[RMDB]
RNA sequence: GGGAACGACUCGAGUAGAGUCGAAAACUGUCCUAGCGGAUAGGUUGACACGAGAGGCAUUUAUCGAGAAAAUGAAUGUUCUGUUUAUGUUUAGGGACCUAUCAGAGAGCGAUAAUUAUAACGAAGAACAGAUAUGGACUACCAUGCCAUCUCUACAGCUAGAAUAAAAGUUCGCUUUUAUUCUAGCAAAAGAAACAACAACAACAAC
Reactivity to 2A3 in 0.01 (KOAc 150mM, MgCl2 10mM, bicine 150mM(pH8.5), 24C), signal-to-noise 4, nucleotides 027 to 156: c010u030g040u050c000c000u030a040g000c050g030g000a030u010a010g050g020u020u080g050a040c030a030c150g040a030g010a010g090g010c020a000u020u060u000a050u080c120g040a060g170a130a070a030a020u040g040a010a030u040g030u150u190c010u010g100u040u110u060a120u070g070u020u060u160a070g040g040g000a020c000c000u030a010u040c040a020g050a000g000a000g100c030g010a020u040a090a020u240u170a130u080a190a030c090g020a050a060g020a060a040c050a060g050a010u040a030u080g030g000a070c030u070a160c090c070a060u090g040c010c000a140u070c050u020c010u070a010c030a010
Reactivity to DMS in 0.01 (KOAc 150mM, MgCl2 10mM, bicine 150mM(pH8.5), 24C), signal-to-noise 2, nucleotides 027 to 156: c090u000g030u000c010c020u010a110g000c140g060g030a040u000a020g030g030u000u000g000a050c050a100c070g010a060g020a040g010g030c030a020u000u000u000a030u010c040g010a220g050a100a110a050a040u000g000a000a050u000g010u000u020c010u030g000u010u000u000a020u000g000u000u000u010a130g040g040g000a030c030c000u000a020u000c050a110g000a130g010a070g010c030g000a100u010a050a120u010u020a160u000a110a140c090g020a060a050g000a060a080c030a060g010a090u010a090u000g020g000a140c030u000a080c040c010a140u000g010c000c020a170u000c040u000c010u000a020c060a250